[RMDB]
RNA sequence: GGGAACGACUCGAGUAGAGUCGAAAAGAUAUGGACGUGAAAGAUCGUCCUCCGAGUUCAACAGCUGUAAGGAUCGGAAACGAUCCACAGACAUGAACGGCGAGGACGAUCUUUCACGUCCUAAGUCGAAGCAUAAGUUGUUCGCAACUUAUGCUUCAAAAGAAACAACAACAACAAC
Reactivity to DMS in 0.01 (KOAc 150mM, MgCl2 10mM, bicine 150mM(pH8.5), 24C), signal-to-noise 3, nucleotides 027 to 126: g010a110u010a300u000g000g010a010c000g040u000g000a010a040a040g000a000u000c010g030u010c000c010u000c000c020g020a270g000u010u010c000a060a090c300a220g000c000u000g010u020a140a080g010g020a010u010c000g000g010a140a100a230c010g000a000u010c000c000a050c000a000g010a040c120a220u000g010a000a020c000g020g070c300g010a010g000g000a010c000g010a000u000c000u000u000u010c000a010c020g000u000c010c000u000a010a080g010u010c100